[RMDB]
RNA sequence: GGGAACGACUCGAGUAGAGUCGAAAAUCUGAGAUCAUCUUGGGAAAUAGACUGAAACUGACUGAAAUGGAAACUUCCUUUGAGUCCAUUUUGGAAAUAUUUACAUCUAUAAUUGUAGCACUUGUACUACAUUGCUUUUUCAACUCUUAUACCCACAGUCAAAAUGAGUGUUCGCACUCAUUUUGACAAAAGAAACAACAACAACAAC
Reactivity to 2A3 in 0.01 (KOAc 150mM, MgCl2 10mM, bicine 150mM(pH8.5), 24C), signal-to-noise 4, nucleotides 027 to 156: u050c030u050g030a010g010a110u150c030a020u020c080u030u050g020g000g020a050a090a030u060a020g030a020c040u030g020a030a040a030c080u020g030a010c000u010g010a010a000a010u010g010g040a110a110a090c050u150u130c080c000u170u140u280g030a020g030u000c000c000a000u010u010u020u040g020g030a010a080a040u070a040u070u130u090a050c010a010u000c030u110a110u110a300a210u150u100g020u080a000g030c030a020c190u040u140g080u150a030c000u030a000c010a030u030u100g060c030u030u020u030u030u040c040a070a080c010u020c010u020u080a070u080a110c020c000c000a040c040a070